The record gives the reactivity of an RNA of 177 nucleotides to DMS and 2A3. Conditions: 150 mM KOAc, 10 mM MgCl2 and 150 mM bicine (pH 8.5), 24 C. Values are in units of 0.01, from 0 to 300, in steps of 10. The DMS profile rests on 4,251 reads. Source: RMDB library TTRDEL, as collected in RNAgym.
RNA sequence: GGGAACGACUCGAGUAGAGUCGAAAAGAUAUGGAUUUCUUUCGCGAUAAGCAGAGUAUCGGAAACGAUACCCUGCUUUUGACGCGGAAGAGAUCCUAAGUCAAACCGACCGCUUCGGCGGUCGGAACAUAGUUCUUGUCUUCGGACAAGAACUAUGAAAAGAAACAACAACAACAAC
Reactivity to DMS in 0.01 (KOAc 150mM, MgCl2 10mM, bicine 150mM(pH8.5), 24C), signal-to-noise 3, nucleotides 027 to 126: g010a030u000a200u010g010g000a000u000u000u000c000u010u000u000c000g010c010g000a130u010a010a010g030c000a020g000a020g010u000a010u000c000g010g010a040a090a080c000g010a020u010a010c000c010c010u000g010c000u000u000u000u000g010a200c100g010c000g020g010a010a000g010a010g010a010u000c000c000u000a000a060g000u000c010a100a120a220c000c000g000a020c000c000g030c000u000u010c190g030g010c000g030g010u000c000g000g010a020a100
Reactivity to 2A3 in 0.01 (KOAc 150mM, MgCl2 10mM, bicine 150mM(pH8.5), 24C), signal-to-noise 2, nucleotides 027 to 126: g000a020u060a040u140g020g000a010u000u000u000c000u000u000u010c020g000c020g080a140u060a260a010g000c010a000g020a000g010u000a000u000c020g020g020a080a030a030c010g000a000u000a010c010c000c010u010g010c000u020u000u000u020g030a020c020g010c000g000g000a000a000g000a000g010a010u020c000c000u010a050a000g040u000c030a070a070a100c010c000g000a010c020c000g070c070u070u100c300g180g000c000g030g000u000c010g000g000a000a010